[RMDB]
RNA sequence: GGGAACGACUCGAGUAGAGUCGAAAAUGAACAACCUUGCAGUUAUUGGUGCAUUGUCGACAGGAAGUGGCUAUUCGCGAGAAGAGCAGAAGUACAGUAUGAUGAAUAUGGAAUACAUGAACAAGACAGUAUUAUCGCUGUUCGCAGCGAUAAUACUAAAAGAAACAACAACAACAAC
Reactivity to 2A3 in 0.01 (KOAc 150mM, MgCl2 10mM, bicine 150mM(pH8.5), 24C), signal-to-noise 4, nucleotides 027 to 126: u170g040a050a040c040a050a080c020c000u030u110g010c040a020g030u150u090a160u220u210g060g010u090g000c040a030u000u190g100u080c030g010a010c040a060g010g130a170a030g030u030g050g000c000u020a060u110u120c050g020c020g000a040g050a200a030g020a040g010c040a040g040a110a030g020u110a030c090a010g060u050a080u150g070a040u120g030a100a070u160a090u110g070g160a060a030u070a080c070a110u100g050a100a010c060a140a000g150a020c060
Reactivity to DMS in 0.01 (KOAc 150mM, MgCl2 10mM, bicine 150mM(pH8.5), 24C), signal-to-noise 4, nucleotides 027 to 126: u020g000a100a030c170a080a130c040c000u000u020g030c110a060g020u000u030a100u040u000g010g030u030g000c080a050u030u020g010u010c070g000a070c070a040g010g020a080a070g020u010g020g020c010u000a080u010u010c020g000c140g000a170g020a080a030g000a070g000c060a050g010a030a030g000u030a080c060a080g030u030a030u010g020a050u000g000a150a050u020a030u020g000g010a050a060u010a060c060a040u040g030a000a100c170a040a070g040a060c210

An RNA of 177 nucleotides, treated with 2A3 and DMS and read out base by base.
Reactivities are given for positions 27 through 126.
The reactions ran in a buffer of 150 mM KOAc, 10 mM MgCl2 and 150 mM bicine (pH 8.5), at 24 C.
In probing experiments dimethyl sulfate is read out at A N1 and C N3, which are open when not base-paired.